This 207-nucleotide RNA was probed chemically with DMS and 2A3. Values cover nucleotides 27 to 156. Source: RMDB library OK3TST, as collected in RNAgym.
RNA sequence: GGGAACGACUCGAGUAGAGUCGAAAACUGCUAGGGUUAAAUAUGAUGAUGUUUUGAAGCGUGUGAAAGAUUUUAACAGGGCUCCUCAGCCGACACUUGUGUAUGCUUGCUCUCUCAUGGAUGGUUUGGUUGCAGCUUUGGAACAAUUUGCGCCUAAAUGUCAUGCUAUGUUCGCAUAGCAUGACAUAAAAGAAACAACAACAACAAC
Reactivity to DMS in 0.01 (KOAc 150mM, MgCl2 10mM, bicine 150mM(pH8.5), 24C), signal-to-noise 2, nucleotides 027 to 156: c090u000g000c020u000a100g040g030g000u000u000a080a100a110u010a090u000g030a070u000g010a060u000g010u020u000u000u020g010a040a050g050c050g020u000g040u010g000a100a110a140g000a130u000u020u010u000a050a130c070a120g010g010g040c040u000c050c040u020c050a070g030c040c000g020a070c030a050c050u000u000g020u000g010u000a100u010g040c000u000u000g010c020u000c040u000c030u010c040a100u000g000g010a060u000g020g020u010u000u000g000g010u000u000g010c020a010g010c070u000u020u000g020g030a140a060c050a020a200u000u000u020g050c040g000c150c020u010a050a110
Reactivity to 2A3 in 0.01 (KOAc 150mM, MgCl2 10mM, bicine 150mM(pH8.5), 24C), signal-to-noise 2, nucleotides 027 to 156: c040u030g000c050u080a050g090g010g040u050u110a100a070a050u210a150u110g030a030u020g010a010u030g050u030u090u020u110g040a080a000g010c060g010u020g010u010g120a060a170a050g050a050u080u140u050u070a080a080c070a080g010g020g000c010u060c060c030u100c070a010g020c010c020g070a050c030a010c020u060u070g020u000g000u040a070u080g020c040u080u030g030c000u010c010u000c000u000c060a030u090g040g010a050u030g010g060u040u050u080g000g000u090u070g000c010a020g010c000u010u050u080g010g000a090a000c010a010a050u060u050u110g050c030g010c000c000u110a200a180